[RMDB]
RNA sequence: GGGAACGACUCGAGUAGAGUCGAAAACCAGAUGACGGUCCUGCCAUGAGACCGCAACGAGAGCAUGUCGCAUCGAAUGGACUCGGGGAGUCGGCAGCUUGCGCCACGGAUGAGCGCCUAAUGCCGGAAGAGACGUGCAACUUCGGUUGCACGUCAAGUAAAUGUAGGGGUUCGCCCCUACAUUUACAAAAGAAACAACAACAACAAC
Reactivity to DMS in 0.01 (KOAc 150mM, MgCl2 10mM, bicine 150mM(pH8.5), 24C), signal-to-noise 3, nucleotides 027 to 156: c000c000a160g000a210u000g000a090c000g000g040u000c050c000u000g000c070c230a060u010g030a100g020a010c010c050g050c040a090a140c050g020a190g020a100g040c040a090u000g000u000c010g000c010a090u000c080g010a090a300u010g020g030a070c030u010c030g020g010g000g000a130g030u000c020g000g000c020a090g000c050u000u000g020c030g020c010c010a300c040g010g020a110u000g000a220g010c030g050c000c100u020a050a080u000g020c020c010g040g000a110a100g050a090g000a020c000g040u000g020c000a000a000c000u000u010c300g020g020u000u000g020c000a000c020g000u000c000a000a070
Reactivity to 2A3 in 0.01 (KOAc 150mM, MgCl2 10mM, bicine 150mM(pH8.5), 24C), signal-to-noise 4, nucleotides 027 to 156: c020c000a000g070a150u120g030a080c020g000g010u010c020c020u070g110c060c040a170u120g020a060g010a110c020c010g000c030a060a050c060g110a010g000a010g100c070a090u120g030u110c030g000c040a040u070c050g060a060a050u060g020g020a030c030u020c070g020g000g000g010a050g070u080c020g000g000c010a020g020c080u080u090g000c000g000c020c020a070c110g090g050a180u150g030a070g030c010g030c000c000u110a080a040u060g010c000c000g020g020a030a030g090a010g000a040c000g010u010g000c000a000a000c010u030u030c170g070g000u000u000g000c000a010c000g000u000c000a000a000